Structure probing data (2A3 and DMS) for a 207-nucleotide construct.
DMS adducts were read by reverse transcription with MarathonRT.
Source: RMDB library OK3TST, as collected in RNAgym.
The RNA was probed in 150 mM KOAc, 10 mM MgCl2 and 150 mM bicine (pH 8.5) at 24 C.
2A3 is a SHAPE reagent: it acylates the 2'-hydroxyl of flexible nucleotides of all four kinds.
RNA sequence: GGGAACGACUCGAGUAGAGUCGAAAACAGGUGUCCACAGCCCAGAGGCAUGACCUGGGACAGCAAACUCCGGCAGGGGUGUGGGGGUGCCUCACUGGUGGAAAGUUCAGAAAAAUAGCAGACAAGUUCUGAGCAUGGAACCAGAUCCCAGACACCAUGAGGGAUUAGUAUUCGUACUAAUCCCUCAAAAAGAAACAACAACAACAAC
Reactivity to 2A3 in 0.01 (KOAc 150mM, MgCl2 10mM, bicine 150mM(pH8.5), 24C), signal-to-noise 2, nucleotides 027 to 156: c020a040g040g000u020g040u030c080c030a050c100a070g120c020c010c000a030g000a030g060g000c060a020u110g080a150c010c020u060g000g000g060a070c030a060g080c000a110a190a010c000u000c000c000g110g040c070a080g000g000g000g000u030g020u070g020g000g010g020g010u030g030c000c000u010c020a060c000u010g030g080u010g040g010a090a020a000g000u020u020c020a020g090a000a070a000a060a040u190a070g020c040a040g040a220c050a240a080g020u030u000c000u000g000a000g020c040a050u110g010g050a010a070c000c000a000g000a040u020c010c000c000a030g020a020c030a020c030c090a020
Reactivity to DMS in 0.01 (KOAc 150mM, MgCl2 10mM, bicine 150mM(pH8.5), 24C), signal-to-noise 2, nucleotides 027 to 156: c080a070g030g020u000g000u000c010c000a070c080a170g000c050c000c030a100g020a060g020g030c090a130u000g000a080c070c030u010g030g000g000a120c050a090g030c040a100a030a040c010u000c020c010g020g030c200a130g030g020g030g060u000g030u010g000g000g000g010g010u010g000c010c000u010c020a150c070u000g000g000u000g020g000a120a080a170g000u000u000c010a030g000a050a060a050a120a140u000a110g000c060a160g020a130c130a110a210g010u000u010c000u000g000a030g000c000a180u010g010g000a160a100c020c030a050g000a200u000c020c000c030a120g010a120c010a020c020c030a240